[RMDB]
RNA sequence: GGGAACGACUCGAGUAGAGUCGAAAAUUGAUAAUUUGUUGUGUAACUUCAUUUAAAUGAAUUGAAACAAAUUUAAUACAAGUGGAUGUAGGAUAAUCGUCCGUCCUUUACAUUGGUAUAAAAGUGAACGACACAGACCUCUUCGGAGGUCUGUGAACAUGUUGAAAAGGUUCGCCUUUUCAACAUGAAAAGAAACAACAACAACAAC
Reactivity to DMS in 0.01 (KOAc 150mM, MgCl2 10mM, bicine 150mM(pH8.5), 24C), signal-to-noise 2, nucleotides 027 to 156: u010u020g030a210u010a050a040u000u000u000g010u020u000g020u000g000u010a080a100c090u000u000c010a010u000u000u000a100a130a130u000g000a050a090u000u000g000a110a110a100c040a040a020a020u010u000u000a060a120u010a130c040a050a080g050u000g000g000a060u000g010u000a040g020g000a030u010a090a140u000c070g010u000c030c020g000u000c010c000u000u000u000a040c030a170u000u010g030g040u010a040u000a030a010a040a140g020u000g000a020a030c010g040a130c010a000c000a000g000a030c000c020u000c000u010u010c300g040g030a030g000g020u010c000u000g020u000g000a030a080
Reactivity to 2A3 in 0.01 (KOAc 150mM, MgCl2 10mM, bicine 150mM(pH8.5), 24C), signal-to-noise 2, nucleotides 027 to 156: u110u050g070a050u040a200a030u040u060u050g020u000u040g020u020g050u130a080a070c010u020u010c030a080u040u080u250a120a290a100u040g020a010a000u040u030g020a070a030a000c010a000a040a050u090u090u120a140a070u170a070c020a150a030g030u100g060g020a060u140g080u190a010g000g000a000u000a040a070u060c000g000u000c000c010g000u010c000c000u030u050u000a020c020a110u110u240g100g000u050a010u010a100a050a000a010g160u160g090a090a030c000g010a000c000a010c000a000g010a000c010c000u000c000u050u040c150g110g000a000g000g000u000c000u000g000u000g000a000a000